[RMDB]
RNA sequence: GGGAACGACUCGAGUAGAGUCGAAAAUUGUGACGCACCGGACAUUAUGCGUACGGCUUCUGUGAAGACGGCGCGCCCGUCCUGCAUCGUCAUUAAAAAUUCGCUUGCAUCGCGUUCAGGUGCGUAAUACUCGGUGGUCAUUCGUGACCACCGAGUAAAAAGAAACAACAACAACAAC
Reactivity to 2A3 in 0.01 (KOAc 150mM, MgCl2 10mM, bicine 150mM(pH8.5), 24C), signal-to-noise 1, nucleotides 027 to 126: u030u100g000u010g070a000c000g000c000a020c000c070g000g000a000c010a030u120u230a060u300g000c000g030u080a270c000g000g030c000u040u050c050u050g260u180g050a000a000g000a010c010g020g050c040g000c030g010c050c010c000g070u070c000c020u000g040c020a020u080c000g050u010c020a040u040u300a020a040a000a050a020u060u050c000g020c070u010u080g000c000a020u030c010g060c040g100u020u060c080a100g000g000u000g000c000g020u020a020a020
Reactivity to DMS in 0.01 (KOAc 150mM, MgCl2 10mM, bicine 150mM(pH8.5), 24C), signal-to-noise 1, nucleotides 027 to 126: u020u010g000u010g020a050c020g020c300a130c000c010g000g000a000c000a080u000u000a110u010g020c000g000u000a110c000g010g000c000u000u000c030u020g020u040g020a040a000g030a030c000g010g000c050g040c030g000c150c230c150g010u010c000c020u000g010c050a050u000c010g030u020c030a050u000u020a030a050a050a090a080u000u000c020g020c070u010u000g010c020a060u000c050g000c100g010u000u000c020a070g030g010u000g000c000g030u010a030a080
This 177-nucleotide RNA was probed chemically with 2A3 and DMS. For 2A3, 989 sequencing reads were counted. It was measured as part of the RMDB library OK2TST. Reactivities are given for positions 27 through 126. High 2A3 reactivity points to a flexible backbone, as in loops and unpaired stretches. The reactions ran in a buffer of 150 mM KOAc, 10 mM MgCl2 and 150 mM bicine (pH 8.5), at 24 C.